[RMDB]
Structure probing data (2A3 and DMS) for a 207-nucleotide construct. The reactions ran in a buffer of 150 mM KOAc, 10 mM MgCl2 and 150 mM bicine (pH 8.5), at 24 C. Reactivities are given for positions 27 through 156.
RNA sequence: GGGAACGACUCGAGUAGAGUCGAAAAUACUAUAGUCUGUUAAGUGUGCAAUAGCAAUAUGUCCAAAAAAACAAACUACAUACCUUAACUCAAAAAUAGUUUGUUGCUAAAAAAUGCUACCAAUCAGCUGAGCCUUCAGUCAUAAUCUUUUUGCUGAGUAGGAUCAUAAUUUCGAUUAUGAUCCUACAAAAGAAACAACAACAACAAC
Reactivity to 2A3 in 0.01 (KOAc 150mM, MgCl2 10mM, bicine 150mM(pH8.5), 24C), signal-to-noise 3, nucleotides 027 to 156: u130a010c060u050a050u150a150g060u060c030u060g080u110u130a140a050g010u070g020u020g080c030a070a240u060a100g020c020a040a030u060a120u250g160u160c120c150a070a050a000a050a010a020a050c020a020a020a020c020u030a010c020a100u110a090c020c010u140u100a140a100c050u050c180a080a140a080a090a140u000a010g010u010u010u030g010u020u030g030c030u100a080a040a030a070a000a030u110g000c010u020a040c010c040a060a100u090c010a020g020c010u010g030a020g030c010c020u060u080c040a020g050u020c030a040u050a170a100u090c080u100u100u120u140u110g040c010u010g040a030
Reactivity to DMS in 0.01 (KOAc 150mM, MgCl2 10mM, bicine 150mM(pH8.5), 24C), signal-to-noise 1, nucleotides 027 to 156: u000a100c020u010a080u010a160g040u000c030u000g020u010u000a000a020g020u030g020u000g030c040a070a120u010a120g000c040a080a080u010a120u000g030u010c090c040a000a000a110a100a070a100a040c040a040a080a070c030u030a020c030a090u010a010c100c030u010u000a010a010c030u020c020a010a020a060a220a110u010a010g010u000u000u010g010u010u000g000c050u020a000a020a040a120a070a090u000g010c000u000a090c020c030a010a110u000c050a070g050c010u010g010a080g020c070c060u000u010c000a010g010u000c010a030u000a060a110u000c000u000u000u000u000u000g010c050u000g010a280